[RMDB]
RNA sequence: GGGAACGACUCGAGUAGAGUCGAAAACGACCUUAAACAGUUCUGGUGGUGCUCUGAAUGGAGUGCUCUACUGAGAUUAUAAAAUAGAAGGUAAGCUAUUAUCUCUUACAACAGGGCAGGGCUUUUUAAAAGCCUUUCAGUUUCGACUGAAAGGCAACUUAUAGCAGCAGUUCGCUGCUGCUAUAAGAAAAGAAACAACAACAACAAC
Reactivity to 2A3 in 0.01 (KOAc 150mM, MgCl2 10mM, bicine 150mM(pH8.5), 24C), signal-to-noise 2, nucleotides 027 to 156: c050g090a030c000c000u070u120a060a160a000c020a080g010u030u060c030u070g060g000u040g010g010u050g020c020u000c010u070g200a160a140u300g030g000a020g010u010g000c000u020c040u030a090c020u060g030a010g010a070u070u080a070u210a220a090a090a050u090a020g030a080a000g090g030u060a050a000g030c010u030a030u130u030a060u150c030u000c010u030u100a050c010a120a020c030a070g040g020g010c000a010g020g000g030c000u080u030u050u160u190a040a240a020a000g010c020c000u000u000u000c000a010g010u000u000u220c130g060a030c000u000g000a000a000a000g000g000c000a000a000